The data come from the RNA Mapping Database (RMDB), library OK2TRN. The record gives the reactivity of an RNA of 177 nucleotides to 2A3 and DMS. DMS adducts were read by reverse transcription with MarathonRT. As a SHAPE reagent, 2A3 marks flexible, mostly unpaired nucleotides at the ribose 2'-OH. The RNA was probed in 150 mM KOAc, 10 mM MgCl2 and 150 mM bicine (pH 8.5) at 24 C. For DMS, 1,602 sequencing reads were counted.

[RMDB]
RNA sequence: GGGAACGACUCGAGUAGAGUCGAAAACAGCCGGUAGCCCAGGCCGGGUAGCACCCGCUUGAUCGCGGUCAGCGCGUGCGCGUCGCGCGGAUCCGCGCUUUGUUGCAGGUGCCCGACGCUGAAGUCGACCGGUACCACUAUUCGUAGUGGUACCGGUAAAAGAAACAACAACAACAAC
Reactivity to 2A3 in 0.01 (KOAc 150mM, MgCl2 10mM, bicine 150mM(pH8.5), 24C), signal-to-noise 1, nucleotides 027 to 126: c020a020g130c000c010g050g030u060a060g020c020c010c020a050g060g000c030c020g020g010g070u100a000g050c000a010c000c000c000g040c010u030u150g040a050u050c000g000c010g000g030u100c030a050g030c010g030c000g020u070g020c200g040c090g120u150c000g000c010g010c000g030g010a120u160c040c030g060c000g060c130u080u080u080g190u080u080g000c020a000g040g020u000g000c020c000c010g010a030c010g000c130u200g080a090a000g070u070c060g010
Reactivity to DMS in 0.01 (KOAc 150mM, MgCl2 10mM, bicine 150mM(pH8.5), 24C), signal-to-noise 1, nucleotides 027 to 126: c150a140g000c000c020g010g000u000a070g000c010c000c010a120g000g010c030c040g020g000g010u020a060g020c020a060c010c000c050g030c020u010u000g000a030u000c000g010c030g020g010u000c000a060g000c000g040c020g000u000g020c070g010c040g000u000c020g010c000g030c000g000g000a030u030c050c010g030c010g010c210u000u000u000g010u000u000g000c020a020g020g010u000g010c010c090c030g000a050c060g000c130u020g010a100a180g010u000c040g000